[RMDB]
RNA sequence: GGGAACGACUCGAGUAGAGUCGAAAAGAUAUGGAGACACUCCCCACCAACAGCGACGAAGAGCUUCGGAAACGAAGCUCAGAGCUGCUGAGGUGUCUCCUAAGUCAAAGUACCCUUCGGGGUACAACAUCUAAUUAAUCUUCGGAUUAAUUAGAUGAAAAGAAACAACAACAACAAC
Reactivity to 2A3 in 0.01 (KOAc 150mM, MgCl2 10mM, bicine 150mM(pH8.5), 24C), signal-to-noise 5, nucleotides 027 to 126: g070a040u270a090u300g000g000a010g000a000c000a000c020u150c070c020c020c010a040c030c010a030a070c010a010g020c000g280a270c020g030a300a060g000a010g000c010u000u000c000g020g000a050a050a030c000g000a000a000g000c000u000c000a000g000a000g010c020u030g000c020u010g010a020g050g010u000g000u000c000u000c000c000u030a130a020g070u060c120a270a040a110g000u010a010c000c010c000u000u070c300g050g000g000g000u000a000c000a000a010
Reactivity to DMS in 0.01 (KOAc 150mM, MgCl2 10mM, bicine 150mM(pH8.5), 24C), signal-to-noise 9, nucleotides 027 to 126: g010a090u010a210u010g000g000a010g010a010c000a010c020u000c100c020c010c050a300c100c020a030a050c010a000g000c000g010a120c150g000a160a110g000a010g010c010u000u000c000g000g000a070a070a150c000g010a010a000g010c000u000c000a010g000a200g010c000u000g000c010u000g000a100g020g000u000g000u000c000u000c000c000u000a020a090g010u010c100a070a110a170g000u000a010c010c000c000u000u020c150g010g010g000g010u000a000c010a060a160
This 177-nucleotide RNA was probed chemically with 2A3 and DMS. The RNA was probed in 150 mM KOAc, 10 mM MgCl2 and 150 mM bicine (pH 8.5) at 24 C. The DMS profile rests on 13,336 reads. It was measured as part of the RMDB library TTRDEL. The 2A3 profile rests on 17,555 reads.